An RNA of 177 nucleotides, treated with 2A3 and read out base by base. Source: RMDB library RFM100, as collected in RNAgym. For 2A3, 538 sequencing reads were counted.

RNA sequence: GGGAACGACUCGAGUAGAGUCGAAAAUUAAUUAUGUAGUCUCGCUUUUGGACCAGAACAAUCACCAUCCUUUAUUAUCCUUGUGCUUGUGACAAUAUCAGUCUAAUGCACACGAGAAACGUAAAAGGUCCACUUCCCUGUUCGCAGGGAAGUGGACAAAAGAAACAACAACAACAAC
Reactivity to 2A3 in 0.01 (KOAc 150mM, MgCl2 10mM, bicine 150mM(pH8.5), 24C), signal-to-noise 1, nucleotides 027 to 126: u140u130a010a020u000u000a000u120g040u000a040g000u110c000u000c020g000c010u050u110u060u100g020g020a020c000c000a020g190a080a090c050a000a120u000c000a000c000c000a010u120c000c020u000u090u000a000u020u060a060u100c000c000u000u090g000u000g000c000u070u000g170u100g060a000c000a090a090u120a050u300c110a100g000u000c000u000a000a170u030g000c000a000c000a000c000g030a110g050a220a000a000c060g000u050a010a030a000a000g070